Chemical mapping of a 177-nucleotide RNA with 2A3 and DMS.
[RMDB]
RNA sequence: GGGAACGACUCGAGUAGAGUCGAAAAGAUAUGGAAAGGGUAUAGAGCAUCGAUCUAGGAUCGGAAACGAUCCUAGGGAGCUCGUAUCCCUUUCCUAAGUCAAAACUGGGGUGUUCGCACCCCAGAAGUAUUCGUAUCACUUCGGUGAUACGAAUACAAAAGAAACAACAACAACAAC
Reactivity to 2A3 in 0.01 (KOAc 150mM, MgCl2 10mM, bicine 150mM(pH8.5), 24C), signal-to-noise 1, nucleotides 027 to 126: g000a000u010a000u070g000g050a010a000a000g160g000g000u100a090u240a280g120a010g010c030a050u300c040g020a040u030c020u010a010g000g000a000u010c020g000g000a000a030a000c020g010a020u040c050c020u000a010g000g000g000a000g000c000u000c030g000u010a000u050c000c010c000u000u000u000c000c000u000a010a000g010u000c020a010a000a110a180c020u000g020g010g000g030u020g060u100u060c260g010c100a020c000c000c010c000a000g000a010a000
Reactivity to DMS in 0.01 (KOAc 150mM, MgCl2 10mM, bicine 150mM(pH8.5), 24C), signal-to-noise 2, nucleotides 027 to 126: g010a040u000a280u020g000g000a020a010a010g010g000g010u000a050u010a190g020a020g040c000a300u020c240g020a030u010c000u000a000g000g000a020u000c010g000g010a010a030a110c000g000a000u000c000c000u000a010g000g000g000a010g010c000u000c000g020u000a060u020c000c000c000u000u000u000c000c000u000a000a060g020u010c000a170a060a110a210c020u010g000g000g010g020u000g020u000u040c290g000c010a020c000c000c000c000a000g010a020a090
For 2A3, 3,244 sequencing reads were counted. Source: RMDB library TTRDES, as collected in RNAgym. Values cover nucleotides 27 to 126.